[RMDB]
RNA sequence: GGGAACGACUCGAGUAGAGUCGAAAAGAUUUACGGCGGGAAACGCGCCGAGGUCUCGGCUGCGGCACCGACCGAAAGGCGCGGAAAGGUCCCGGGUGCGGCACCGACCGAAACCGCCGGAAAGAAAAUUAGGCUACUCAUUCGUGAGUAGCCUAAUAAAAGAAACAACAACAACAAC
Reactivity to DMS in 0.01 (KOAc 150mM, MgCl2 10mM, bicine 150mM(pH8.5), 24C), signal-to-noise 1, nucleotides 027 to 126: g000a160u000u000u000a040c020g010g000c000g000g000g020a160a150a130c010g010c010g000c010c000g000a160g000g030u000c060u010c080g070g020c050u000g010c140g020g000c000a180c060c040g010a030c000c010g000a060a130a190g000g000c020g010c020g060g000a000a110a270g030g000u010c140c190c070g010g000g040u010g030c070g010g000c180a120c080c050g020a080c010c010g000a100a090a180c010c020g020c000c000g040g000a040a040a050g000a070a050a080

Structure probing data (DMS) for a 177-nucleotide construct. The RNA was probed in 150 mM KOAc, 10 mM MgCl2 and 150 mM bicine (pH 8.5) at 24 C. The DMS profile rests on 694 reads. For DMS the reverse transcriptase was MarathonRT.